The data come from the RNA Mapping Database (RMDB), library OK1LIB. An RNA of 177 nucleotides, treated with DMS and 2A3 and read out base by base. For DMS the reverse transcriptase was MarathonRT. For DMS, 2,825 sequencing reads were counted.

[RMDB]
RNA sequence: GGGAACGACUCGAGUAGAGUCGAAAAGCUAUCUCAAGGAAAGAGAUUAGCACUCCACAAAACCCUUGUUGAUGAGCGGAUCGCCUUUUGUCUGUUGAGCGAGACAAGGAUGACGCCUGGAGAGGCGAAUGCAGCUCUCUUUCGAGAGAGCUGCAUUAAAAGAAACAACAACAACAAC
Reactivity to DMS in 0.01 (KOAc 150mM, MgCl2 10mM, bicine 150mM(pH8.5), 24C), signal-to-noise 2, nucleotides 027 to 126: g020c000u000a010u000c000u030c000a040a230g020g020a190a220a150g000a030g010a020u020u060a000g020c000a080c160u030c000c010a150c230a070a090a040a050c070c000c000u000u000g000u000u010g000a110u000g010a060g010c070g060g020a130u010c040g000c040c030u010u010u000u000g000u000c080u000g050u010u000g000a120g010c080g010a070g000a020c010a000a000g020g000a040u020g000a100c000g010c030c030u000g000g000a080g010a040g000g000c010g020
Reactivity to 2A3 in 0.01 (KOAc 150mM, MgCl2 10mM, bicine 150mM(pH8.5), 24C), signal-to-noise 3, nucleotides 027 to 126: g000c010u000a010u000c000u010c020a050a070g300g020a180a100a040g020a010g010a010u030u090a010g010c000a040c030u040c030c010a130c100a090a070a020a050c010c000c000u030u030g020u060u060g100a230u050g020a070g050c080g060g050a050u050c100g030c010c050u040u110u060u220g060u010c100u020g020u050u110g060a070g050c020g000a010g010a030c000a000a000g010g020a010u090g070a020c010g000c000c010u110g000g150a250g010a010g070g030c000g020